Source: RMDB library OK2TRN, as collected in RNAgym. An RNA of 177 nucleotides, treated with 2A3 and DMS and read out base by base. DMS adducts were read by reverse transcription with MarathonRT. The RNA was probed in 150 mM KOAc, 10 mM MgCl2 and 150 mM bicine (pH 8.5) at 24 C.
RNA sequence: GGGAACGACUCGAGUAGAGUCGAAAAGAGUCAGACUGACUGACAGUCUGUCAGAGUGAGACUGAGUCUCUGUCUGUGUGUGUGUGUGACUCUCAGUCAGUGAGUCUGUCAGACUCUGACAGACUCACGCACCUAACUAUUUCGAUAGUUAGGUGCGAAAAGAAACAACAACAACAAC
Reactivity to 2A3 in 0.01 (KOAc 150mM, MgCl2 10mM, bicine 150mM(pH8.5), 24C), signal-to-noise 9, nucleotides 027 to 126: g070a010g050u050c020a010g040a150c040u060g010a020c020u030g020a030c020a010g030u020c020u050g080u020c010a000g030a020g100u090g030a050g010a030c050u150g060a030g130u020c010u000c010u050g170u040c020u010g080u020g020u010g010u010g020u020g030u020g080u090g050a020c000u020c000u000c030a010g040u020c000a010g020u020g030a010g030u000c000u030g000u000c000a010g050a300c060u020c030u220g000a000c000a000g000a000c000u000c000a010
Reactivity to DMS in 0.01 (KOAc 150mM, MgCl2 10mM, bicine 150mM(pH8.5), 24C), signal-to-noise 9, nucleotides 027 to 126: g010a100g010u000c030a060g010a130c040u000g000a120c040u000g010a050c040a040g010u000c030u000g010u000c010a020g000a070g010u010g000a090g010a040c010u010g000a140g010u000c010u000c020u000g000u000c020u000g010u000g010u000g010u000g010u010g010u000g000u010g000a040c010u000c100u000c030a060g010u000c070a060g010u000g000a010g010u000c000u000g000u000c010a030g000a190c180u010c030u000g000a010c000a010g000a010c000u000c010a030